[RMDB]
Source information:
Chemical mapping of a 207-nucleotide RNA with DMS and 2A3. The RNA was probed in 150 mM KOAc, 10 mM MgCl2 and 150 mM bicine (pH 8.5) at 24 C. It was measured as part of the RMDB library OK3TST.
RNA sequence: GGGAACGACUCGAGUAGAGUCGAAAAGAGAUUUAGUUAUGGGACUACCUGGCUAUAGUCUUGGCUAGGGCGUUAGUAGAUCAAUGAAAUUUUCUCAUCAACACGAAGGGCUCUAAGUGUUAAAGGGAGACAGUGCCCACAUCAACCAUGACUAGGAUCCCUGCUAGUAUUUCGAUACUAGCAGGGAAAAAGAAACAACAACAACAAC
Reactivity to DMS in 0.01 (KOAc 150mM, MgCl2 10mM, bicine 150mM(pH8.5), 24C), signal-to-noise 1, nucleotides 027 to 156: g020a210g020a100u000u000u010a020g020u000u010a000u000g030g020g010a210c020u000a010c010c000u000g010g000c020u000a090u000a120g030u030c120u000u010g020g020c000u000a060g000g010g030c070g050u000u010a120g020u000a090g010a160u010c060a060a080u010g000a010a070a120u000u000u010u000c020u000c000a130u000c080a060a020c000a020c020g020a190a100g020g000g010c050u030c050u010a010a170g120u000g010u000u020a060a060a190g000g020g000a080g000a050c110a070g030u020g010c070c000c010a060c100a020u000c080a030a130c030c000a020u000g020a010c020u000a120g000g040a150
Reactivity to 2A3 in 0.01 (KOAc 150mM, MgCl2 10mM, bicine 150mM(pH8.5), 24C), signal-to-noise 3, nucleotides 027 to 156: g100a000g010a030u100u120u100a000g010u020u020a010u080g010g020g020a040c020u020a030c020c020u000g040g000c020u040a080u110a100g160u120c100u110u100g000g000c000u010a010g030g060g000c040g040u100u120a120g040u090a060g000a080u060c090a090a050u080g090a080a090a090u170u080u070u040c050u000c000a110u050c020a020a050c020a020c090g080a070a070g060g010g010c030u010c030u140a040a080g000u000g010u090u080a070a040a030g050g050g010a090g030a020c030a030g050u030g050c000c010c000a040c020a050u070c010a000a000c000c020a020u020g010a010c000u010a030g040g080a020